Chemical mapping of a 207-nucleotide RNA with 2A3 and DMS. The 2A3 profile rests on 5,702 reads. DMS adducts were read by reverse transcription with MarathonRT. The reactions ran in a buffer of 150 mM KOAc, 10 mM MgCl2 and 150 mM bicine (pH 8.5), at 24 C.

RNA sequence: GGGAACGACUCGAGUAGAGUCGAAAAUUUGACAAUUUUUAGCACCAUUAUCUUUGUUUUGAUAUCUAUAUCAGACAGCAUGGUGCGUCUGACAACACAAGGAUUAAGACGGAAAGAUGAAAUGAUUCUCUCAACAUCUUCAAUAGAUACCUUGCUAAUGUAUAGCAGAUUUCGAUCUGCUAUACAUAAAAGAAACAACAACAACAAC
Reactivity to 2A3 in 0.01 (KOAc 150mM, MgCl2 10mM, bicine 150mM(pH8.5), 24C), signal-to-noise 8, nucleotides 027 to 156: u090u060u160g060a030c050a050a050u050u090u050u150u240a100g000c010a000c010c000a010u050u080a120u190c070u120u190u080g050u050u060u100u040g010a000u020a030u090c140u110a230u060a000u190c040a000g010a010c000a000g020c010a010u020g010g000u020g020c000g000u000c010u050g070a050c040a130a010c030a050c000a060a000g010g010a030u040u140a090a050g070a040c070g030g030a150a010a030g010a010u010g020a040a060a070u020g020a050u200u020c090u010c010u000c080a030a300c000a160u000c000u020u020c020a040a060u040a110g080a030u140a170c010c000u020u030g010c020u140a130
Reactivity to DMS in 0.01 (KOAc 150mM, MgCl2 10mM, bicine 150mM(pH8.5), 24C), signal-to-noise 4, nucleotides 027 to 156: u010u010u000g020a150c070a070a080u000u020u000u000u010a190g010c000a040c000c010a070u010u000a080u010c050u000u000u000g020u000u010u010u020g020a040u000a030u010c140u000a190u000a040u000c000a040g010a020c010a060g020c180a060u010g010g030u000g020c000g010u000c020u000g020a130c080a110a100c130a070c020a040a030g020g020a180u000u010a020a030g000a060c040g010g000a070a030a040g000a040u000g010a160a160a170u000g010a150u000u010c020u000c020u000c010a050a070c020a010u000c010u000u000c070a070a150u000a080g010a140u000a080c030c020u000u000g000c040u000a110
For 2A3 the reverse transcriptase was SuperScript II with manganese.